[RMDB]
RNA sequence: GGGAACGACUCGAGUAGAGUCGAAAAUCUGUGCCAGAAGCAUCAGAAGAUCUACAACGUGUUCUACGACUGGGCGUAUGAGGUGAUCAGCGUGUGUCCACUUAGUCAGACUAUCGUCUGCAUGCUACUCGCCUGACUAUUUCGAUAGUCAGGCGAGAAAAGAAACAACAACAACAAC
Reactivity to DMS in 0.01 (KOAc 150mM, MgCl2 10mM, bicine 150mM(pH8.5), 24C), signal-to-noise 2, nucleotides 027 to 126: u000c000u000g010u000g000c030c080a120g010a140a160g050c030a040u000c050a020g000a060a050g000a060u000c040u000a060c060a030a100c170g020u000g000u000u010c040u000a110c090g000a100c030u000g030g010g010c050g000u000a080u000g040a130g030g020u000g020a110u030c050a050g030c030g050u000g010u010g000u000c020c010a080c200u020u010a080g000u000c080a000g000a060c080u000a120u000c150g010u000c010u010g010c050a070u010g020c050u000a090
Reactivity to 2A3 in 0.01 (KOAc 150mM, MgCl2 10mM, bicine 150mM(pH8.5), 24C), signal-to-noise 2, nucleotides 027 to 126: u010c000u050g090u100g020c020c000a020g050a130a000g040c000a030u150c060a030g070a110a010g000a070u000c000u020a040c010a080a020c050g000u030g070u100u000c020u110a090c050g120a120c060u030g050g000g000c000g030u030a100u160g120a090g000g090u080g040a130u000c030a050g020c020g050u080g030u040g040u030c010c020a020c090u070u010a030g030u110c050a020g020a010c020u130a100u220c100g020u010c000u010g000c010a040u080g000c000u050a080